[RMDB]
RNA sequence: GGGAACGACUCGAGUAGAGUCGAAAACCUUCGUCCAUCUCCUUUUCUUACCUUUGGCCGGCAUGGUCCCAGCCUCCUCGUCGGCGCCGGCCGGGCAACAUUCCGAGGGGACCGUCCCUCGGUAAUGAAAUCCAGACGUUCGCGUCUGGAAAAAGAAACAACAACAACAAC
Reactivity to 2A3 in 0.01 (KOAc 150mM, MgCl2 10mM, bicine 150mM(pH8.5), 24C), signal-to-noise 3, nucleotides 027 to 129: c000c000u040u080c040g050u020c040c040a210u020c000u070c090c000u050u070u040u030c040u010u180a140c030c000u050u060u160g000g000c000c030g010g010c060a070u060g030g030u040c000c000c000a000g020c000c000u050c040c000u040c030g080u060c030g030g010c040g040c000c000g000g010c000c030g000g000g000c010a030a010c000a030u020u010c000c010g000a000g040g040g020g040a150c030c020g300u280c040c010c000u000c000g010g010u020a020a020u010g020a060a000a000
Reactivity to DMS in 0.01 (KOAc 150mM, MgCl2 10mM, bicine 150mM(pH8.5), 24C), signal-to-noise 3, nucleotides 027 to 129: c000c030u000u050c000g030u000c020c050a100u000c030u000c010c020u000u030u050u020c090u000u070a160c050c030u000u090u040g000g000c040c030g020g010c030a100u030g030g010u000c060c010c070a270g010c060c010u000c000c000u010c000g010u050c120g040g050c040g070c020c030g040g050c020c060g000g030g000c110a100a180c040a080u010u020c020c000g020a040g040g040g000g000a220c190c240g070u100c040c000c000u040c000g000g000u040a000a010u030g010a100a090a190

Source information: Structure probing data (2A3 and DMS) for a 170-nucleotide construct. It was measured as part of the RMDB library 15KLIB. Reactivities are given for positions 27 through 129. The RNA was probed in 150 mM KOAc, 10 mM MgCl2 and 150 mM bicine (pH 8.5) at 24 C.